[RMDB]
RNA sequence: GGGAACGACUCGAGUAGAGUCGAAAAGCUUUGGGGGUGACACAAAGUGUGGAAGAACAGCAGCUACUGCGGGCUCCGUCCUCAGAUUCAGCCCCAGAUGUUUGGUGCAGAGGACACGGGGCUGACCCAGCUGGAGAAAUUUCGAUUUCUCCAGCUGAAAAGAAACAACAACAACAAC
Reactivity to 2A3 in 0.01 (KOAc 150mM, MgCl2 10mM, bicine 150mM(pH8.5), 24C), signal-to-noise 1, nucleotides 027 to 126: g010c010u110u070u030g020g000g000g030g050u040g030a010c020a000c000a070a180a110g060u060g040u080g070g010a070a030g010a110a050c020a060g110c010a000g000c030u110a060c040u170g000c030g060g010g000c010u020c040c020g020u030c000c010u080c020a000g010a140u070u040c010a010g000c000c000c000c000a010g030a200u100g120u130u130u030g050g010u140g050c000a010g020a050g120g000a000c010a000c060g000g010g020g000c040u000g000a000c030c000
Reactivity to DMS in 0.01 (KOAc 150mM, MgCl2 10mM, bicine 150mM(pH8.5), 24C), signal-to-noise 2, nucleotides 027 to 126: g020c050u000u000u010g010g000g010g010g040u010g020a110c080a060c070a060a050a070g000u000g020u010g000g000a090a070g000a120a070c070a070g000c040a040g000c060u000a050c060u000g010c080g000g000g030c010u010c020c060g000u000c010c000u010c040a080g010a250u010u010c270a050g020c020c020c010c010a040g000a150u010g000u000u010u010g020g020u010g000c050a050g000a080g000g000a020c020a040c060g010g000g000g000c000u000g000a050c140c040
The record gives the reactivity of an RNA of 177 nucleotides to 2A3 and DMS.
The reactions ran in a buffer of 150 mM KOAc, 10 mM MgCl2 and 150 mM bicine (pH 8.5), at 24 C.
DMS adducts were read by reverse transcription with MarathonRT.
For DMS, 2,200 sequencing reads were counted.
The 2A3 profile rests on 1,032 reads.